[RMDB]
Overview
Chemical mapping of a 177-nucleotide RNA with DMS and 2A3. The data come from the RNA Mapping Database (RMDB), library OK2TRN. Values are in units of 0.01, from 0 to 300, in steps of 10. For 2A3, 1,651 sequencing reads were counted.
RNA sequence: GGGAACGACUCGAGUAGAGUCGAAAAUUGAUUGCAUUGAAUUAUGCUAGUGGAGUGAUUUUUGAGAAUCAUAGUGGAUAAUGUUUGUUGGCUGCAAAACACAAUAAGAAUGCCAGUUCUUACCUACUACCUCAUACACAUUCGUGUGUAUGAGGUAAAAAGAAACAACAACAACAAC
Reactivity to DMS in 0.01 (KOAc 150mM, MgCl2 10mM, bicine 150mM(pH8.5), 24C), signal-to-noise 5, nucleotides 027 to 126: u010u000g010a110u000u000g000c020a040u000u000g010a140a170u010u000a020u010g010c020u000a120g020u000g010g010a130g020u010g010a030u000u000u010u010u000g010a110g010a040a040u000c020a030u000a100g030u000g010g000a060u010a030a060u000g000u000u000u000g010u010u010g010g010c050u000g010c070a040a040a080a080c070a030c090a050a090u000a040a040g000a040a050u000g010c070c090a100g010u000u000c040u000u000a100c070c030u000a070c190
Reactivity to 2A3 in 0.01 (KOAc 150mM, MgCl2 10mM, bicine 150mM(pH8.5), 24C), signal-to-noise 3, nucleotides 027 to 126: u060u060g050a020u070u130g000c060a020u000u080g060a220a030u270u090a050u110g050c010u030a050g090u060g130g070a120g000u050g030a070u040u000u040u140u180g230a180g110a050a000u030c010a010u020a040g030u030g050g000a050u060a160a050u150g160u050u120u020g050u060u120g080g000c020u050g030c060a020a010a070a050c060a010c010a030a110u100a060a020g040a050a010u080g030c050c000a010g000u040u010c010u010u040a030c000c000u000a030c020
Background:
DMS adducts were read by reverse transcription with MarathonRT.